[RMDB]
RNA sequence: GGGAACGACUCGAGUAGAGUCGAAAAGCAGUCGACACGCCUUCUGCACGGGAAGUCCUUCUGCGGCCAUCGUUGCUAUGGCCGCUUACUGCCUUCUAGUCCGUGCGGCUCUCGCAACAGCUCACGGUCACCGUUCUUGAUUCGUCAAGAACGGUGAAAAAGAAACAACAACAACAAC
Reactivity to 2A3 in 0.01 (KOAc 150mM, MgCl2 10mM, bicine 150mM(pH8.5), 24C), signal-to-noise 3, nucleotides 027 to 126: g010c000a010g040u080c020g060a050c010a010c070g070c030c020u060u050c040u060g030c040a010c040g010g000g030a050a010g020u050c020c020u090u070c060u050g010c000g010g000c010c000a020u040c040g300u160u210g020c150u080a010u020g000g010c000c000g010c000u000u000a000c010u030g020c010c020u050u020c020u060a060g060u000c020c020g000u010g000c020g000g000c010u010c000u040c080g040c040a030a110c000a090g010c010u010c020a020c000g050g030
Reactivity to DMS in 0.01 (KOAc 150mM, MgCl2 10mM, bicine 150mM(pH8.5), 24C), signal-to-noise 4, nucleotides 027 to 126: g010c070a070g000u010c080g010a060c050a070c140g010c060c040u010u010c040u000g020c040a050c050g000g000g010a070a080g010u000c030c090u000u010c110u000g010c020g000g000c010c000a020u000c050g030u010u010g010c210u000a040u010g000g010c000c000g000c010u000u000a020c090u000g010c100c040u000u000c030u000a150g000u010c010c010g000u000g010c120g000g010c030u000c030u000c180g010c080a080a080c240a060g000c030u000c050a060c080g010g020